[RMDB]
RNA sequence: GGGAACGACUCGAGUAGAGUCGAAAAGAAAGUGAGCGGUUAGAAGCUCGCUGGGGAUAACGCCAGAGGUGCUGUCACCUCACCCGUUAAGUCGGUCGGCCCCCAGGACGCCUCUAGCCGCUCAUAACACUGUCCUGCUCUUCGGAGCAGGACAGUGAAAAGAAACAACAACAACAAC
Reactivity to 2A3 in 0.01 (KOAc 150mM, MgCl2 10mM, bicine 150mM(pH8.5), 24C), signal-to-noise 1, nucleotides 027 to 126: g170a000a110a000g000u030g000a020g000c000g000g000u060u030a000g000a000a000g060c010u000c060g140c040u030g000g010g000g000a000u100a250a090c100g000c030c130a060g000a000g000g000u100g000c250u280g300u300c000a000c000c000u000c000a010c000c000c000g010u030u030a020a060g220u000c000g000g000u020c000g000g110c020c010c010c020c020a000g000g000a000c150g060c000c000u010c010u040a000g000c000c030g000c000u040c000a000u000a000a000
This 177-nucleotide RNA was probed chemically with 2A3.
It was measured as part of the RMDB library RFM100.